[RMDB]
RNA sequence: GGGAACGACUCGAGUAGAGUCGAAAAGGUAGCGGCAUUGUUGGAGCUGGGGGCCGGUUUCAACAUGGAGUACACCGGCAGGGAAAACAUAAUCUUCAAUGCCAUGCUUCUUGGAUUGGGCGAGCAAUAAUUAAUCGCGUUUCGACGCGAUUAAUUAAAAAGAAACAACAACAACAAC
Reactivity to DMS in 0.01 (KOAc 150mM, MgCl2 10mM, bicine 150mM(pH8.5), 24C), signal-to-noise 2, nucleotides 027 to 126: g020g010u010a060g000c040g000g000c020a030u000u000g010u010u000g020g010a270g010c170u010g030g020g020g020g010c020c030g020g010u010u000u000c080a120a120c130a110u000g000g010a100g040u010a090c180a070c040c010g010g030c030a120g000g030g000a080a070a060a060c120a060u000a110a120u010c040u010u010c020a020a030u000g000c010c020a120u000g020c030u000u000c010u000u010g000g000a140u000u000g000g000g000c030g000a070g000c150a090a130

This 177-nucleotide RNA was probed chemically with DMS. For DMS the reverse transcriptase was MarathonRT. Conditions: 150 mM KOAc, 10 mM MgCl2 and 150 mM bicine (pH 8.5), 24 C.